[RMDB]
RNA sequence: GGGAACGACUCGAGUAGAGUCGAAAAUGGUUUGCCGAUGAACCCUGCUUCGCGUCUGUAUCCCAAGAAUUUUAUCCAGACGGGCAUUAGCCUUAUCGACGGGAUGAAUACCUUGAUUCGUGGGCAGCAAGUAACGAAUCUUCGGAUUCGUUACUUGAAAAGAAACAACAACAACAAC
Reactivity to 2A3 in 0.01 (KOAc 150mM, MgCl2 10mM, bicine 150mM(pH8.5), 24C), signal-to-noise 4, nucleotides 027 to 126: u070g010g020u050u010u100g140c070c070g060a080u160g010a040a040c010c000c010u010g010c000u150u240c040g010c020g020u020c030u070g110u090a180u040c000c020c020a000a010g030a020a010u100u120u110u120a020u010c020c020a050g020a060c020g030g000g000c020a040u160u280a050g000c000c020u060u100a100u100c040g070a070c090g040g000g010a000u030g010a050a040u090a130c000c030u100u070g030a080u090u070c040g000u050g000g000g020c020a010g010
Reactivity to DMS in 0.01 (KOAc 150mM, MgCl2 10mM, bicine 150mM(pH8.5), 24C), signal-to-noise 5, nucleotides 027 to 126: u020g000g020u000u000u000g010c050c060g000a080u010g010a090a080c020c020c060u010g010c010u000u000c030g020c070g000u000c030u010g020u010a100u000c020c070c000a110a100g010a090a110u010u010u000u000a040u000c050c020a070g000a130c190g010g000g000c030a100u000u000a090g010c020c000u000u000a120u010c070g010a140c190g020g000g000a020u000g010a040a040u000a120c130c030u000u000g010a110u000u010c050g020u000g000g010g000c090a070g000